Background: The record gives the reactivity of an RNA of 207 nucleotides to DMS and 2A3. The reactions ran in a buffer of 150 mM KOAc, 10 mM MgCl2 and 150 mM bicine (pH 8.5), at 24 C.
RNA sequence: GGGAACGACUCGAGUAGAGUCGAAAACCUGGUUUAGGGUUCCAGGCUAGCCCUAUCUAUCGGUCGAGAUGCGAGCGCUUAAGCUGAAAUUGAGUGGCUGAGUUAGUGGUGAACGUAUCCCUAUGUUAAAACGGUAGCUGCUUCGGCAGCUACCGAAUCUUUCAUACUGGUUCGCCAGUAUGAAAGAAAAAGAAACAACAACAACAAC
Reactivity to DMS in 0.01 (KOAc 150mM, MgCl2 10mM, bicine 150mM(pH8.5), 24C), signal-to-noise 2, nucleotides 027 to 156: c010c020u000g000g050u020u000u000a060g040g020g020u000u000c030c020a120g070g030c030u020a200g010c000c000c010u000a040u000c060u000a090u000c040g030g080u000c000g010a280g020a100u010g030c000g010a100g030c020g010c170u000u000a060a080g030c020u020g010a040a190a170u000u000g010a140g030u010g010g030c000u000g010a170g040u000u000a060g030u000g020g030u020g010a080a110c120g010u010a130u000c000c010c000u000a140u000g000u000u000a040a070a130a200c020g050g020u000a000g030c000u000g000c000u000u010c250g040g030c010a030g020c040u010a010c020c010g010a000a010
Reactivity to 2A3 in 0.01 (KOAc 150mM, MgCl2 10mM, bicine 150mM(pH8.5), 24C), signal-to-noise 3, nucleotides 027 to 156: c000c000u000g030g040u020u050u070a060g020g020g000u120u070c030c040a030g020g010c020u020a030g010c000c000c010u010a000u030c020u030a130u080c000g020g030u040c060g020a030g000a160u130g080c100g110a040g040c090g060c170u170u210a120a050g000c020u060g090a020a090a120u110u050g040a040g030u150g060g000c020u020g010a000g050u020u050a050g020u080g070g000u040g020a070a040c070g030u060a070u100c010c010c010u030a060u090g110u060u150a090a070a020a010c010g000g000u000a020g000c000u000g000c000u020u020c130g100g010c010a000g000c000u000a000c000c000g000a000a000